Source information:
Conditions: 150 mM KOAc, 10 mM MgCl2 and 150 mM bicine (pH 8.5), 24 C. This 177-nucleotide RNA was probed chemically with DMS and 2A3. In probing experiments dimethyl sulfate is read out at A N1 and C N3, which are open when not base-paired.

RNA sequence: GGGAACGACUCGAGUAGAGUCGAAAAGAUAUGGAUUAUUCUGAUCGGGAGGUAGAUCUCGGAAACGAGAUUUACCGAAGAACGAUCAGAGAUAAUCCUAAGUCAAAGUCAACGUUCGCGUUGACAAGCCAAUAUUUAAGUUCGCUUAAAUAUUGGCAAAAGAAACAACAACAACAAC
Reactivity to DMS in 0.01 (KOAc 150mM, MgCl2 10mM, bicine 150mM(pH8.5), 24C), signal-to-noise 7, nucleotides 027 to 126: g000a040u000a300u010g000g010a010u000u000a010u000u000c010u000g000a010u000c010g010g000g010a090g020g020u000a000g000a010u000c000u000c000g000g000a080a100a240c010g020a010g000a020u000u000u000a000c000c000g000a070a120g000a170a210c010g000a000u000c000a000g000a020g020a020u000a010a000u000c000c000u000a040a150g020u010c040a110a130a160g000u000c000a000a010c000g010u000u010c280g030c020g020u000u000g000a010c000a100a130
Reactivity to 2A3 in 0.01 (KOAc 150mM, MgCl2 10mM, bicine 150mM(pH8.5), 24C), signal-to-noise 5, nucleotides 027 to 126: g040a010u090a050u180g000g000a000u000u010a020u060u000c010u010g000a010u000c010g010g040g000a030g010g000u000a010g000a020u000c000u000c000g020g030a070a070a020c010g000a000g000a000u000u000u010a000c010c000g000a020a000g000a020a010c010g000a000u000c000a000g010a020g000a000u010a010a000u000c000c000u010a130a030g040u030c070a170a060a060g010u010c000a010a010c020g040u070u090c300g030c000g150u000u010g000a010c000a000a010